Source: RMDB library OK1LIB, as collected in RNAgym.
Chemical mapping of a 177-nucleotide RNA with DMS and 2A3.
For DMS, 3,258 sequencing reads were counted.
2A3 adducts were read by reverse transcription with SuperScript II with manganese.
The RNA was probed in 150 mM KOAc, 10 mM MgCl2 and 150 mM bicine (pH 8.5) at 24 C.
[RMDB]
RNA sequence: GGGAACGACUCGAGUAGAGUCGAAAACCAGCUCACGGACACCAUCCGCAAGGACCUGCGGUUGUCGCUGGCCAAGUUUAGCAUUGCGUGCACCAAGACCUCCUCGUUUUCGGGAAACGCCCCGCGCGAGUUUACAUGCUUUCGAGCAUGUAAACUCAAAAGAAACAACAACAACAAC
Reactivity to DMS in 0.01 (KOAc 150mM, MgCl2 10mM, bicine 150mM(pH8.5), 24C), signal-to-noise 2, nucleotides 027 to 126: c000c000a090g020c060u020c040a020c090g010g000a080c070a040c090c080a070u010c010c000g000c080a100a070g010g000a130c140c020u020g000c030g020g000u020u030g000u010c080g020c010u000g000g030c020c040a110a070g030u000u030u030a060g030c010a060u010u020g010c010g010u020g020c050a110c050c040a080a070g010a050c080c090u000c040c000u000c100g020u010u000u040u000c020g020g000g000a010a090a180c070g010c120c010c000c080g000c140g000c070
Reactivity to 2A3 in 0.01 (KOAc 150mM, MgCl2 10mM, bicine 150mM(pH8.5), 24C), signal-to-noise 6, nucleotides 027 to 126: c000c000a020g010c020u050c020a050c050g060g020a030c020a020c040c000a060u050c010c010g000c040a050a130g110g040a120c010c030u050g010c030g010g020u040u060g070u070c040g020c040u040g030g000c020c020a100a040g040u060u150u180a060g010c070a070u020u180g030c020g030u040g010c030a020c020c020a080a000g040a080c000c010u020c000c000u020c020g030u030u020u060u080c010g010g030g020a050a080a040c070g060c030c010c000c000g070c010g010c040